This 177-nucleotide RNA was probed chemically with 2A3 and DMS. For 2A3 the reverse transcriptase was SuperScript II with manganese. Values are in units of 0.01, from 0 to 300, in steps of 10. The 2A3 profile rests on 7,727 reads.

RNA sequence: GGGAACGACUCGAGUAGAGUCGAAAAGAUAUGGAGAUCGACGACGUUGCUUCGAAGAACUCGGAAACGAGGGAGAAGGCAACAUCAGAUCUCCUAAGUCAAAGGUACCACGUUCGCGUGGUACCAACAUAAUGUCGGGGUUCGCCCCGACAUUAUGAAAAGAAACAACAACAACAAC
Reactivity to 2A3 in 0.01 (KOAc 150mM, MgCl2 10mM, bicine 150mM(pH8.5), 24C), signal-to-noise 3, nucleotides 027 to 126: g020a030u080a050u140g000g000a000g010a000u010c030g100a150c160g000a020c040g090u000u000g000c030u020u020c020g150a300a100g030a060a050c040u020c000g000g030a090a090a050c010g010a020g000g030g000a050g020a060a010g250g040c010a000a000c000a000u010c010a000g000a000u000c000u000c000c000u000a070a020g030u020c080a150a030a040g000g010u000a000c000c010a010c030g040u060u080c300g010c010g110u000g000g000u000a000c000c000a000a010
Reactivity to DMS in 0.01 (KOAc 150mM, MgCl2 10mM, bicine 150mM(pH8.5), 24C), signal-to-noise 4, nucleotides 027 to 126: g000a040u010a300u000g010g000a010g020a010u000c000g010a140c200g020a010c030g000u000u000g000c000u000u010c050g020a110a120g000a140a190c010u000c010g020g020a110a080a130c010g000a010g010g010g000a130g000a070a020g020g020c010a000a010c010a020u010c010a140g010a010u000c000u000c000c000u000a010a090g020u000c030a070a070a100g000g010u000a000c000c000a000c000g020u000u010c180g010c000g060u000g000g010u000a000c000c010a020a060